[RMDB]
RNA sequence: GGGAACGACUCGAGUAGAGUCGAAAAGCUAAGAUGCAUUGCGGAGCUUGUGGGUACGGUUGGGCUUAGUCGAAGCACAGUCAUGCAAGUGGCUAGUUGUAAUGCUAGCUAACUCAAUGGGGCUCACGAAAAAGCACUACUUCGGUAGUGCUUUUUCAAAAGAAACAACAACAACAAC
Reactivity to DMS in 0.01 (KOAc 150mM, MgCl2 10mM, bicine 150mM(pH8.5), 24C), signal-to-noise 1, nucleotides 027 to 126: g000c020u000a080a080g000a100u000g000c040a030u000u010g010c030g000g020a080g020c010u000u020g030u000g020g000g000u000a030c140g010g030u000u000g000g000g010c250u020u000a060g000u000c080g030a130a030g010c000a040c060a100g010u020c000a110u000g000c200a050a090g020u000g000g000c000u000a010g020u000u040g000u020a080a020u000g000c020u000a100g000c010u010a010a020c030u010c090a030a050u010g000g020g020g020c070u010c040a100c190